The data come from the RNA Mapping Database (RMDB), library OK3TST. This 207-nucleotide RNA was probed chemically with 2A3 and DMS. The RNA was probed in 150 mM KOAc, 10 mM MgCl2 and 150 mM bicine (pH 8.5) at 24 C.
RNA sequence: GGGAACGACUCGAGUAGAGUCGAAAAUUUGCUGUCAAGGAGCCCAGAUACUGGGUAGAGACAGAAAAGUGAAAGAAUAAUUCCAUCACAGCAAUGAUGGAGAUGUCUGUGGUCAUUAGCUAGAGUCUGAGAGAUGGGAUGGCUAUCCCAGAUUGGACUGAUAGGAGCUGUUCGCAGCUCCUAUCAGAAAAGAAACAACAACAACAAC
Reactivity to 2A3 in 0.01 (KOAc 150mM, MgCl2 10mM, bicine 150mM(pH8.5), 24C), signal-to-noise 2, nucleotides 027 to 156: u070u010u120g000c020u000g000u000c010a050a070g090g010a030g090c010c020c020a020g050a140u290a280c120u010g050g010g020u060a040g000a010g000a070c000a020g100a040a100a010a020g140u170g060a070a040a060g050a070a070u120a090a130u130u000c010c000a020u000c010a010c060a070g070c030a080a270u070g000a000u000g050g000a020g000a040u170g020u040c030u030g020u030g000g000u020c070a080u050u130a010g010c010u030a040g000a030g160u000c000u080g060a030g000a010g000a130u060g020g000g040a030u010g050g000c020u030a010u000c010c000c000a000g010a080u070u130g020g040a020
Reactivity to DMS in 0.01 (KOAc 150mM, MgCl2 10mM, bicine 150mM(pH8.5), 24C), signal-to-noise 1, nucleotides 027 to 156: u010u000u000g000c040u030g000u000c000a150a260g020g040a170g050c000c040c020a050g010a300u000a130c100u020g090g000g020u000a020g000a300g000a030c020a040g020a060a030a040a060g010u020g040a120a080a010g000a220a110u000a070a160u040u000c000c010a030u060c040a050c040a260g000c150a090a300u030g000a060u000g010g040a040g010a130u020g030u000c030u010g030u010g000g030u030c010a080u000u000a040g000c000u000a020g020a230g000u000c030u010g000a160g010a110g040a150u010g010g030g000a030u010g010g020c090u000a180u000c020c020c000a030g030a110u000u000g080g040a140